[RMDB]
RNA sequence: GGGAACGACUCGAGUAGAGUCGAAAAUGAAAUCAAAAUUAGAGAAGUGAAGGCUGAGAUGGUAAUGGUAAUGAAGGUAGGAUAUUGUCACUGGUUUACGGUAACCACCACCACCAAAAUUAAAAAACUAAUAGGACAGUUUCGACUGUCCUAUUAGAAAAGAAACAACAACAACAAC
Reactivity to DMS in 0.01 (KOAc 150mM, MgCl2 10mM, bicine 150mM(pH8.5), 24C), signal-to-noise 3, nucleotides 027 to 126: u010g000a100a110a120u010c060a080a050a070a110u000u010a080g030a120g000a100a050g000u000g000a080a090g000g010c050u010g010a060g000a030u000g000g010u000a050a050u010g010g030u010a030a080u000g010a090a040g020g020u000a040g020g010a050u000a060u010u010g000u000c040a030c090u020g000g000u000u000u010a050c110g000g010u000a060a020c050c040a040c040c050a080c070c040a020c050c050a010a070a060a090u000u010a010a070a050a090a060a080
Reactivity to 2A3 in 0.01 (KOAc 150mM, MgCl2 10mM, bicine 150mM(pH8.5), 24C), signal-to-noise 1, nucleotides 027 to 126: u030g000a040a010a010u060c040a000a010a060a230u160u200a150g060a010g000a210a010g040u040g090a050a040g050g010c060u010g010a040g000a120u050g050g030u070a080a030u030g040g040u040a030a050u080g060a050a030g000g000u080a020g010g040a060u050a070u140u100g050u040c000a010c090u060g000g040u100u050u010a040c000g000g000u000a040a000c000c000a010c000c000a000c000c000a010c000c050a050a020a030a080u160u150a150a100a010a000a000a050

An RNA of 177 nucleotides, treated with DMS and 2A3 and read out base by base. For DMS, 2,026 sequencing reads were counted. For 2A3, 908 sequencing reads were counted.